Description
This 170-nucleotide RNA was probed chemically with DMS and 2A3. For DMS the reverse transcriptase was MarathonRT. Source: RMDB library 15KLIB, as collected in RNAgym. For 2A3, 6,454 sequencing reads were counted.

RNA sequence: GGGAACGACUCGAGUAGAGUCGAAAACCACUGCUCGAGGACGUCCUCCCUGUCUCCUCGGUUCUUCUUCGAUCCGGACCGGCUCAUCUCGGCAAGGGGCGGCAGUCCUCAGUGCUCUUACUCUUUCGCGCUGGCGACUUCGGUCGCCAGAAAAGAAACAACAACAACAAC
Reactivity to DMS in 0.01 (KOAc 150mM, MgCl2 10mM, bicine 150mM(pH8.5), 24C), signal-to-noise 2, nucleotides 027 to 129: c120c030a200c140u020g020c000u050c030g030a070g040g000a000c100g000u040c000c000u030c000c070c000u080g010u020c020u000c000c020u040c080g020g050u070u060c000u060u060c040u020u000c190g060a150u020c110c030g060g030a060c000c060g030g000c070u010c050a140u040c020u000c050g030g150c080a100a100g030g020g000g040c070g020g010c080a070g020u050c020c000u030c100a050g040u000g040c030u040c000u000u050a140c040u020c100u000u060u120c140g000c100g000
Reactivity to 2A3 in 0.01 (KOAc 150mM, MgCl2 10mM, bicine 150mM(pH8.5), 24C), signal-to-noise 4, nucleotides 027 to 129: c020c000a080c080u050g000c000u020c080g000a020g010g030a060c000g020u040c000c000u050c000c000c010u020g010u000c030u000c010c040u040c000g020g000u010u000c040u170u040c010u090u130c080g150a190u040c010c030g000g000a010c010c020g010g000c030u030c050a130u050c070u040c020g000g000c000a070a130g000g000g000g000c040g000g000c020a070g010u020c000c000u030c000a000g010u010g020c000u000c020u100u140a140c000u080c010u060u060u090c050g000c000g020